Conditions: 150 mM KOAc, 10 mM MgCl2 and 150 mM bicine (pH 8.5), 24 C. This 207-nucleotide RNA was probed chemically with 2A3 and DMS. The DMS profile rests on 7,592 reads. Values cover nucleotides 27 to 156. The data come from the RNA Mapping Database (RMDB), library OK3TST. For DMS the reverse transcriptase was MarathonRT.
RNA sequence: GGGAACGACUCGAGUAGAGUCGAAAAUCGAUAUCGAUGGUGUCGACACUGUCUCACGCAACACCUUUGAGUCGGUCGAAUAUCUUCGAAUUCACGAAAAUCUUCGCUCUGAGAUUCAAUCAGCCGAUGUUGACGACGCGAUUGAAAAGGAAUUUGCCACCUAUCUUUACUUCGGUAAAGAUAGGUGAAAAGAAACAACAACAACAAC
Reactivity to 2A3 in 0.01 (KOAc 150mM, MgCl2 10mM, bicine 150mM(pH8.5), 24C), signal-to-noise 9, nucleotides 027 to 156: u040c010g010a010u060a040u060c070g050a080u200g060g030u020g020u040c020g020a030c030a040c190u150g050u050c010u020c030a060c050g030c020a020a060c030a090c090c000u030u010u040g020a020g010u000c010g010g000u010c010g030a060a030u060a050u100c040u040u020c010g050a160a150u190u150c090a080c160g050a060a060a050a070u060c050u120u090c060g070c120u070c070u130g050a050g010a160u100u070c050a030a060u010c020a030g070c040c020g020a030u070g030u180u090g050a060c030g010a010c020g000c010g210a020u060u070g060a040a020a010a020g060g020a070a110u110u060u090g030c020
Reactivity to DMS in 0.01 (KOAc 150mM, MgCl2 10mM, bicine 150mM(pH8.5), 24C), signal-to-noise 3, nucleotides 027 to 156: u000c020g000a070u000a060u000c020g040a040u000g010g020u010g000u000c010g020a120c040a100c050u010g000u000c160u000c030a070c140g000c030a050a070c040a080c020c000u000u010u010g010a140g010u000c020g000g040u000c010g000a060a080u000a060u000c040u000u000c020g000a100a190u010u000c100a120c050g010a090a050a060a050u000c080u000u000c050g020c080u000c020u000g000a110g000a160u000u000c040a040a090u000c020a070g010c140c010g010a100u010g000u000u000g020a290c020g010a070c000g010c060g040a060u010u000g000a030a030a090a150g010g030a090a140u000u000u000g020c060